Source: RMDB library 15KLIB, as collected in RNAgym.
Chemical mapping of a 170-nucleotide RNA with DMS and 2A3.
Values cover nucleotides 27 to 129.
[RMDB]
RNA sequence: GGGAACGACUCGAGUAGAGUCGAAAAGGGGAGCUUCGACGAUCUCUUGUCUCUCCUGAAGGAGGAAGGAGCUCUCGAACGCUCUCCCGACCGCUCGGAUGGGCCGCUUCCGGCAAGAGGGGCCGAAUUACGAGCUGCUUCGGCAGCUCGAAAAGAAACAACAACAACAAC
Reactivity to DMS in 0.01 (KOAc 150mM, MgCl2 10mM, bicine 150mM(pH8.5), 24C), signal-to-noise 3, nucleotides 027 to 129: g060g010g040g010a010g010c010u010u000c000g030a050c140g010a070u020c040u020c010u050u030g090u040c030u050c020u050c010c000u100g020a210a130g050g030a070g080g030a060a040g010g000a020g010c070u010c030u000c030g000a000a060c210g020c000u010c010u030c000c000c040g020a070c000c000g040c040u020c010g010g040a090u020g000g000g000c050c010g000c070u050u030c030c090g000g000c170a150a090g020a060g030g000g020g000c090c010g070a170a060u140u030a110
Reactivity to 2A3 in 0.01 (KOAc 150mM, MgCl2 10mM, bicine 150mM(pH8.5), 24C), signal-to-noise 5, nucleotides 027 to 129: g050g020g000g000a010g010c000u000u010c000g000a000c130g010a040u000c010u010c000u020u060g300u090c060u020c010u000c140c010u100g150a200a140g020g000a000g010g000a000a000g010g000a010g010c000u000c000u000c000g000a010a010c150g000c000u010c000u020c000c000c000g010a000c000c010g020c020u010c000g120g010a120u100g050g020g000c020c000g120c050u090u020c060c000g090g080c060a070a030g010a030g030g020g010g030c010c030g010a070a040u120u080a080
The reactions ran in a buffer of 150 mM KOAc, 10 mM MgCl2 and 150 mM bicine (pH 8.5), at 24 C.